The record gives the reactivity of an RNA of 177 nucleotides to 2A3 and DMS.
RNA sequence: GGGAACGACUCGAGUAGAGUCGAAAAGUGGAAACCCGCUUUAUUCACUGGGGUCGACAACUCUGGGGAGAAAAGGGAGGAUCGGAUGGGAAGAGUAUAUCCUAUGGGAAUCCCUGGUUUCCCCUCAGUAGUGUAAUUUGUUCGCAAAUUACACUACAAAAGAAACAACAACAACAAC
Reactivity to 2A3 in 0.01 (KOAc 150mM, MgCl2 10mM, bicine 150mM(pH8.5), 24C), signal-to-noise 3, nucleotides 027 to 126: g030u020g020g020a190a160a200c020c000c000g000c030u050u060u060a120u080u040c030a020c050u050g030g020g000g000u020c000g030a060c020a150a060c020u030c060u100g010g000g010g000a030g040a000a010a000a010g010g010g000a020g030g010a050u060c040g050g060a050u080g080g000g000a080a040g100a050g270u090a070u030a040u150c010c010u020a040u090g030g000g010a010a020u010c000c000c000u000g010g010u020u030u020c000c000c010c000u000c000a010
Reactivity to DMS in 0.01 (KOAc 150mM, MgCl2 10mM, bicine 150mM(pH8.5), 24C), signal-to-noise 3, nucleotides 027 to 126: g040u010g010g010a130a140a200c220c000c030g020c040u000u000u000a070u010u000c050a060c030u000g000g010g000g030u000c030g000a030c100a080a090c040u010c050u000g000g010g000g020a030g000a010a060a050a030g000g000g010a030g010g010a270u000c040g010g010a080u000g010g000g010a040a100g020a190g000u010a090u010a080u000c000c000u000a080u030g010g010g000a300a180u000c000c000c000u010g000g010u000u000u000c000c000c010c030u010c070a050
Values cover nucleotides 27 to 126. For 2A3 the reverse transcriptase was SuperScript II with manganese. It was measured as part of the RMDB library VIROID. The DMS profile rests on 2,567 reads.